Source information
Chemical mapping of a 177-nucleotide RNA with 2A3 and DMS. DMS adducts were read by reverse transcription with MarathonRT. High DMS reactivity at an A or C suggests that its Watson-Crick edge is free. 2A3 adducts were read by reverse transcription with SuperScript II with manganese.
RNA sequence: GGGAACGACUCGAGUAGAGUCGAAAAGAUGCAGCUUUUGUGAGAUCAUCAGAAUCACCAACAAUUUUAGAAGUCAGCUGCACAGUAGCAGACUGCAUUUAUUCUGCAGACUUUGGUGGUUCGCUAACAUAUCAUAUUAUUUCGAUAAUAUGAUAUGAAAAGAAACAACAACAACAAC
Reactivity to 2A3 in 0.01 (KOAc 150mM, MgCl2 10mM, bicine 150mM(pH8.5), 24C), signal-to-noise 9, nucleotides 027 to 126: g020a010u020g000c010a010g010c030u070u140u200u180g140u140g090a130g010a120u120c030a020u050c030a060g010a010a010u000c000a010c030c000a020a040c040a090a090u100u120u230u240a090g020a090a010g040u070c030a000g000c010u010g020c020a000c020a080g160u180a020g000c010a010g060a170c020u020g000c020a000u050u100u080a130u170u040c020u020g000c010a020g020a070c010u090u050u030g000g010u010g010g000u020u000c000g000c020u010a050a020
Reactivity to DMS in 0.01 (KOAc 150mM, MgCl2 10mM, bicine 150mM(pH8.5), 24C), signal-to-noise 9, nucleotides 027 to 126: g000a080u000g000c030a030g010c020u000u000u000u010g020u010g010a100g010a180u010c060a100u010c150a150g010a020a010u000c000a010c010c010a030a050c260a060a080u010u000u010u000a090g010a070a050g010u010c030a050g010c010u000g010c020a070c130a130g020u010a080g010c010a020g000a090c030u000g010c100a100u000u000u000a070u020u000c050u000g000c050a050g010a080c180u000u000u000g010g020u000g000g010u000u000c010g010c190u010a060a180